This 177-nucleotide RNA was probed chemically with DMS and 2A3. The 2A3 profile rests on 5,188 reads. For DMS, 14,685 sequencing reads were counted. The RNA was probed in 150 mM KOAc, 10 mM MgCl2 and 150 mM bicine (pH 8.5) at 24 C. 2A3 adducts were read by reverse transcription with SuperScript II with manganese.
RNA sequence: GGGAACGACUCGAGUAGAGUCGAAAAUCAUCGUUCUUCGGAACGAUGAAGUAUAACGCGGGCUCCGGAGACAGGCGUAGCUGGCCUGGGAUAGUCACAGUAUGGGGCAAACUUUCGAGUUUGCCAAUAUUAUAGCGUCAUUCGUGACGCUAUAAUAAAAAGAAACAACAACAACAAC
Reactivity to DMS in 0.01 (KOAc 150mM, MgCl2 10mM, bicine 150mM(pH8.5), 24C), signal-to-noise 7, nucleotides 027 to 126: u000c000a000u000c000g010u000u000c000u000u010c180g020g010a010a010c000g010a010u000g000a010a070g010u010a080u010a070a100c110g010c060g010g010g010c040u010c020c040g000g000a110g010a150c070a040g010g010c050g020u000a070g010c100u000g010g010c040c010u000g000g000g000a080u010a050g010u000c060a060c090a100g000u000a090u010g010g000g010g000c000a010a000a010c000u000u000u010c180g010a020g010u000u000u000g000c000c010a040a030
Reactivity to 2A3 in 0.01 (KOAc 150mM, MgCl2 10mM, bicine 150mM(pH8.5), 24C), signal-to-noise 3, nucleotides 027 to 126: u040c010a000u000c000g010u000u000c010u030u030c230g100g010a000a000c000g000a000u000g000a010a000g000u040a090u050a220a060c080g000c030g040g030g030c010u010c070c020g060g020a060g040a040c030a020g050g000c030g030u030a040g040c090u080g060g000c000c010u010g010g020g010a080u100a050g040u050c030a010c010a140g080u120a110u200g150g010g030g010c050a000a000a000c030u090u090u100c230g030a020g010u000u010u010g000c000c000a000a010